Conditions: 150 mM KOAc, 10 mM MgCl2 and 150 mM bicine (pH 8.5), 24 C.
The record gives the reactivity of an RNA of 207 nucleotides to 2A3.
The 2A3 profile rests on 890 reads.
For 2A3 the reverse transcriptase was SuperScript II with manganese.
[RMDB]
RNA sequence: GGGAACGACUCGAGUAGAGUCGAAAACUGCAGGUCAACGGCCCUUCUUCAGAUCAGCUAUUGCAGAAGAAAGGUCAGCCAAGCGCUCUGGGCCAGGGCGACUGUAUAUAGGAGCUUCUGAUUUCAACCAGAAGCUAACUCUCUCCGAAACAAUGAGUAGGAUUAGGUAGUUCGCUACCUAAUCCUAAAAAGAAACAACAACAACAAC
Reactivity to 2A3 in 0.01 (KOAc 150mM, MgCl2 10mM, bicine 150mM(pH8.5), 24C), signal-to-noise 2, nucleotides 027 to 156: c040u070g000c040a050g030g050u170c080a050a070c130g010g000c000c070c000u030u020c010u030u000c000a040g020a300u100c030a050g080c030u160a190u300u300g010c020a020g010a020a010g020a020a020a000g000g000u000c010a000g020c020c020a100a020g010c020g030c020u000c040u040g030g000g140c070c020a010g010g010g000c000g020a090c020u010g070u010a040u000a020u050a150g180g010a010g000c000u020u000c000u000g070a150u120u300u300c050a050a040c000c000a000g000a000a000g000c000u000a030a020c010u010c000u000c000u040c030c050g120a130a110a070c060a080a200u170g030a030g070